[RMDB]
RNA sequence: GGGAACGACUCGAGUAGAGUCGAAAAUCCUCCUUCGGGAGGACAAACGAUAUGGAUCCUACCCACCUUUAUUUGGUCGUUGAAAUUCGCUCGGAAACGAGCGAAUGGAGACCAAUUAAAGAGGGAUCCUAAGUCCUAUGACGGUUUUCGAACCGAACGUAUGAUGUAAAUUCGUUUACAUCAUACGAAAAGAAACAACAACAACAAC
Reactivity to 2A3 in 0.01 (KOAc 150mM, MgCl2 10mM, bicine 150mM(pH8.5), 24C), signal-to-noise 9, nucleotides 027 to 156: u010c010c000u020c010c000u040u080c270g110g010g000a030g010g010a020c070a030a190a020c070g040a060u030a050u170g010g000a000u000c010c010u060a290c050c020c010a040c010c000u020u000u010a020u010u020u000g020g000u000c030g150u160u040g020a020a020a000u000u000c010g000c000u000c000g000g020a040a070a070c010g000a000g000c000g000a000a000u000g000g010a020g000a000c000c010a000a000u010u000a000a000a000g020a020g000g000g000a000u000c000c000u010a060a020g030u040c020c040u240a210u300g120a090c020g010g050u020u030u080u140c170g100a040a010c010c010g040a060a020
Reactivity to DMS in 0.01 (KOAc 150mM, MgCl2 10mM, bicine 150mM(pH8.5), 24C), signal-to-noise 3, nucleotides 027 to 156: u000c000c000u000c000c020u000u010c290g030g020g020a010g020g050a010c050a030a060a170c080g020a150u010a190u000g010g010a010u000c010c010u000a110c050c010c040a300c190c000u000u000u000a020u000u000u000g010g010u000c010g000u020u000g020a130a160a100u000u000c010g030c020u000c000g030g000a130a110a230c010g000a020g030c000g020a000a000u000g010g000a270g020a030c010c000a000a010u000u000a000a030a000g010a190g030g000g010a020u040c000c010u000a040a120g020u000c020c040u020a130u010g010a170c060g000g010u000u010u000u020c140g000a050a080c020c000g010a130a160
Overview:
Structure probing data (2A3 and DMS) for a 207-nucleotide construct. DMS adducts were read by reverse transcription with MarathonRT. The data come from the RNA Mapping Database (RMDB), library RNAMAK. Conditions: 150 mM KOAc, 10 mM MgCl2 and 150 mM bicine (pH 8.5), 24 C.